[RMDB]
RNA sequence: GGGAACGACUCGAGUAGAGUCGAAAAGUUGACUAUAUUAUGAACAUCGACAGACCACUUGAAAAGGUCGUCAGCCUCUGGGACUGGGUUCUCGAUCAGAACCUGCUCAAAGUGUUCACGGCACGACAGACAGGGUAUAAUCUCCUUGUACCCCUCCCCAAUAGUCCGUAUUCGUACGGACUAUUGGAAAAGAAACAACAACAACAAC
Reactivity to 2A3 in 0.01 (KOAc 150mM, MgCl2 10mM, bicine 150mM(pH8.5), 24C), signal-to-noise 4, nucleotides 027 to 156: g020u020u020g020a030c020u020a040u040a070u300u080a140u300g040a010a040c030a040u080c060g020a010c030a040g060a040c010c030a040c080u120u140g060a060a080a080a050g040g000u000c000g020u010c020a010g020c000c030u030c040u020g000g000g110a120c060u140g040g030g040u020u000c020u020c050g170a170u140c030a010g010a010a010c000c000u020g010c000u000c010a030a100a000g070u080g010u100u090c050a010c040g040g020c050a050c150g060a050c050a030g090a020c020a030g020g030g010u020a040u020a090a140u090c050u040c060c030u030u030g000u100a090c030c010c000c000u030c040c000
Reactivity to DMS in 0.01 (KOAc 150mM, MgCl2 10mM, bicine 150mM(pH8.5), 24C), signal-to-noise 1, nucleotides 027 to 156: g000u000u000g000a150c040u000a110u000a170u000u130a080u000g020a190a120c030a090u000c010g010a090c060a060g020a170c000c030a140c070u010u000g010a130a060a080a140g010g040u000c000g000u000c030a100g030c030c020u000c010u000g010g000g000a090c150u000g060g010g000u000u000c000u010c060g000a120u010c150a130g020a030a030c010c010u010g000c080u010c030a030a010a050g000u010g000u030u000c090a100c110g000g000c020a190c000g000a080c060a040g000a100c060a080g000g010g040u000a030u000a020a080u010c010u000c020c030u000u000g010u000a130c030c000c010c000u000c060c080

An RNA of 207 nucleotides, treated with 2A3 and DMS and read out base by base. Reactivities are given for positions 27 through 156. It was measured as part of the RMDB library OK3TST.